Background:
This 207-nucleotide RNA was probed chemically with 2A3. The 2A3 profile rests on 420 reads. Values cover nucleotides 27 to 156.
[RMDB]
RNA sequence: GGGAACGACUCGAGUAGAGUCGAAAAGAGUUUUCACUUUACGGACUUCUACGACUAUAAAGGAGAGGGUCAACAAAUUAUAUUUUAUGAGGGCGUAAAUUUUACACCUUAUCACGGCUUUAAAUGUACUUCUGCUGGCGAUAAUGCUGUGUGGAUAAUUCCUACAUGCUUUCGAGCAUGUAGGAAUAAAAGAAACAACAACAACAAC
Reactivity to 2A3 in 0.01 (KOAc 150mM, MgCl2 10mM, bicine 150mM(pH8.5), 24C), signal-to-noise 1, nucleotides 027 to 156: g060a030g010u080u050u060u190c070a040c040u050u030u040a040c120g090g140a220c030u070u000c000u070a160c020g040a090c040u190a040u060a190a110a000g060g040a130g010a040g070g000g000u030c070a100a000c000a000a100a000u190u110a070u130a060u120u150u090u060a070u120g010a000g000g000g010c060g040u010a000a000a240u070u130u000u040a000c000a010c000c000u000u030a040u040c010a000c010g020g000c070u070u010u140a050a200a000u210g020u160a100c040u110u070c010u100g060c030u010g070g000c000g090a040u000a030a000u070g050c110u060g000u000g000u000g060g010a030u060a140